[RMDB]
RNA sequence: GGGAACGACUCGAGUAGAGUCGAAAAGACAAAUCCAGAUACAGGCAUAUCCUUCUAUCUUGCAAGAAUUCAAGUUGACCCAGACAGCUUGGCAGAGCUGGGAGACUUGUCUCUUUUGCCUGGUAUGGUCUCUCUGGAGUUUCGACUCCAGAGAGACAAAAGAAACAACAACAACAAC
Reactivity to DMS in 0.01 (KOAc 150mM, MgCl2 10mM, bicine 150mM(pH8.5), 24C), signal-to-noise 1, nucleotides 027 to 126: g000a140c030a050a100a090u000c020c000a050g030a180u020a120c040a020g000g020c100a090u000a030u000c050c090u000u000c090u000a010u000c070u000u000g000c090a000a050g000a050a000u000u000c000a000a010g010u010u010g030a300c040c030c010a030g030a020c000a260g000c050u000u000g140g000c040a080g000a300g020c000u000g030g010g000a300g000a000c060u010u000g000u000c010u000c170u010u000u000u000g010c020c020u020g000g040u000a090u000g000
Reactivity to 2A3 in 0.01 (KOAc 150mM, MgCl2 10mM, bicine 150mM(pH8.5), 24C), signal-to-noise 1, nucleotides 027 to 126: g080a040c020a020a050a090u080c030c010a050g010a030u300a080c020a000g070g000c040a000u050a170u280c020c080u050u270c030u080a190u150c010u000u060g010c090a050a000g030a030a020u000u020c000a000a000g050u050u080g300a300c010c010c000a000g000a080c010a010g050c080u270u250g190g000c090a090g070a020g010c020u020g000g000g000a000g010a000c010u020u010g030u030c000u010c010u020u070u050u000g020c010c000u000g020g000u030a120u080g100

Source information
Structure probing data (DMS and 2A3) for a 177-nucleotide construct. Values cover nucleotides 27 to 126. 2A3 adducts were read by reverse transcription with SuperScript II with manganese. DMS adducts were read by reverse transcription with MarathonRT. It was measured as part of the RMDB library OK2TST.